[RMDB]
RNA sequence: GGGAACGACUCGAGUAGAGUCGAAAAUCAGGUCACUUCGGUGACCUGAAAACAAGGAACCAAAAGGAAAACGUAACCAAGGAAUAUGGAAACCAAAAUAAAAAACCAUAGCCUUCGGGCUAUGGAACAGAUACUAUAGCUUCGGCUAUAGUAUCUGAAAAGAAACAACAACAACAAC
Reactivity to DMS in 0.01 (KOAc 150mM, MgCl2 10mM, bicine 150mM(pH8.5), 24C), signal-to-noise 3, nucleotides 027 to 126: u000c010a010g000g020u000c000a030c000u000u020c220g050g010u000g000a010c000c000u000g000a010a010a090a100c190a060a070g010g020a100a090c030c030a050a050a070a060g020g000a050a020a070a080c100g010u020a040a100c020c030a010a080g010g010a160a050u020a080u000g000g000a060a090a120c070c090a040a030a080a160u020a010a120a060a040a110a090c000c000a000u000a010g010c000c000u010u010c220g030g010g000c000u010a000u000g000g000a070a070
Reactivity to 2A3 in 0.01 (KOAc 150mM, MgCl2 10mM, bicine 150mM(pH8.5), 24C), signal-to-noise 4, nucleotides 027 to 126: u020c000a000g000g000u000c000a000c000u040u080c190g130g000u000g020a000c000c000u000g000a000a000a000a010c040a000a070g090g030a040a050c020c010a050a070a020a100g090g000a070a150a010a010c060g040u040a020a040c030c020a040a040g100g030a180a080u100a050u250g050g050a080a030a030c020c030a030a070a140a040u250a060a180a030a020a000a020c000c010a000u000a010g000c000c000u050u100c290g100g010g000c000u010a000u000g000g000a010a000